Source: RMDB library OK1LIB, as collected in RNAgym.
This 177-nucleotide RNA was probed chemically with DMS and 2A3.
For DMS the reverse transcriptase was MarathonRT.
Values cover nucleotides 27 to 126.
Conditions: 150 mM KOAc, 10 mM MgCl2 and 150 mM bicine (pH 8.5), 24 C.
RNA sequence: GGGAACGACUCGAGUAGAGUCGAAAAUUAAGAUGGGUCCUAACAUUGCUGCCAGGUUCAAAAACGGUGAUUUUAAUUCACGUGGAGUUAGUAAGUCUUGCACCGGAGAUACUUUUUGCGAAGAUAGGUAAGACAACGGUUUCGACCGUUGUCUUACAAAAGAAACAACAACAACAAC
Reactivity to DMS in 0.01 (KOAc 150mM, MgCl2 10mM, bicine 150mM(pH8.5), 24C), signal-to-noise 2, nucleotides 027 to 126: u030u060a080a040g030a030u000g000g050g010u010c010c000u000a050a100c080a020u010u020g020c020u000g000c020c060a090g020g010u000u000c080a040a060a130a140a130c030g050g030u020g000a070u020u050u050u020a040a130u040u020c040a010c040g000u020g000g030a100g040u020u010a060g020u000a090a150g020u030c020u010u000g000c020a020c010c020g000g000a030g000a060u010a070c040u000u000u000u000u000g000c050g010a040a070g010a100u020a030g030
Reactivity to 2A3 in 0.01 (KOAc 150mM, MgCl2 10mM, bicine 150mM(pH8.5), 24C), signal-to-noise 2, nucleotides 027 to 126: u020u010a050a060g090a090u180g000g000g110u000c000c000u000a000a010c030a150u090u100g000c000u030g000c000c000a010g000g000u070u060c070a030a000a120a000a020c050g000g000u030g000a000u000u060u190u100a170a240u200u030c040a020c060g050u090g060g090a070g030u120u020a010g020u120a290a000g000u020c040u050u090g000c040a000c040c000g000g000a110g000a000u110a060c000u020u130u090u140u220g060c050g010a050a000g050a150u040a080g000